[RMDB]
RNA sequence: GGGAACGACUCGAGUAGAGUCGAAAAGAUUAGCAACAAUGUCAGAUAAUCGAUACCAACUAAUUAGGCGAGAAGCGGUUUCUCAUGGUCUUAGUGGCCUAGAAAUUGAUGUAUUUGAUUUGCAUUCGAUACUCCGAAUUUUCGAAUUCGGAGUAUCAAAAGAAACAACAACAACAAC
Reactivity to DMS in 0.01 (KOAc 150mM, MgCl2 10mM, bicine 150mM(pH8.5), 24C), signal-to-noise 7, nucleotides 027 to 126: g010a080u000u000a070g020c050a090a070c270a080a080u010g010u000c040a060g010a070u000a050a060u000c010g010a090u000a120c050c120a070a120c170u010a080a100u010u000a070g010g010c040g000a090g010a050a060g010c070g010g000u000u000u000c010u000c180a060u000g010g010u000c020u000u010a120g040u000g000g010c010c020u010a030g000a030a030a060u000u000g000a040u010g010u010a040u000u010u000g010a080u000u000u000g010c050a130u010u010c110
Reactivity to 2A3 in 0.01 (KOAc 150mM, MgCl2 10mM, bicine 150mM(pH8.5), 24C), signal-to-noise 6, nucleotides 027 to 126: g020a050u120u160a010g020c020a010a080c040a100a170u210g050u100c020a020g040a110u070a050a030u050c000g000a000u050a070c000c040a030a050c020u080a110a130u180u120a090g090g000c040g010a040g030a080a020g070c080g050g040u000u050u000c020u010c020a050u110g030g000u000c010u010u050a110g050u140g220g000c000c000u010a030g010a060a050a010u060u080g030a030u060g040u070a060u020u050u060g070a050u050u020u080g020c040a040u040u130c070